[RMDB]
RNA sequence: GGGAACGACUCGAGUAGAGUCGAAAAGAGAAUGCUGGCAUGAGUAGCGAGAGACGAGAGGGUAACUCGUCCGCCGUAAACCCGAGGUUUCCUGGGCAAGGCUAAUCCUCCCAGGGUCAGUCGGGGGCGGCAAUUUGCAUUUCGAUGCAAAUUGCCGAAAAGAAACAACAACAACAAC
Reactivity to 2A3 in 0.01 (KOAc 150mM, MgCl2 10mM, bicine 150mM(pH8.5), 24C), signal-to-noise 2, nucleotides 027 to 126: g030a010g050a080a010u200g000c040u030g000g020c050a080u130g050a030g060u110a000g080c020g030a010g000a020g000a070c000g010a000g040a050g150g020g040u080a130a060c000u000c000g030u000c000c000g040c010c030g050u110a100a110a100c000c000c000g000a010g030g040u090u140u100c000c000u000g000g000g010c170a150a000g000g000c050u080a060a140u160c030c030u080c000c000c000a000g000g000g000u040c000a050g100u000c000g000g000g000g000g000
Reactivity to DMS in 0.01 (KOAc 150mM, MgCl2 10mM, bicine 150mM(pH8.5), 24C), signal-to-noise 2, nucleotides 027 to 126: g060a140g000a080a010u010g020c050u000g010g010c090a070u000g010a210g040u010a110g010c020g010a170g060a170g000a000c010g010a020g010a100g000g000g000u010a090a050c040u000c000g000u020c000c060g010c160c000g000u000a050a100a110c000c000c000g000a070g010g000u000u000u080c010c000u000g010g000g030c170a070a040g000g010c300u030a110a150u030c030c010u010c030c010c000a050g010g000g010u000c100a020g040u000c010g000g000g000g000g000
Structure probing data (2A3 and DMS) for a 177-nucleotide construct. The data come from the RNA Mapping Database (RMDB), libraries RFM100 and RFMREP. Conditions: 150 mM KOAc, 10 mM MgCl2 and 150 mM bicine (pH 8.5), 24 C.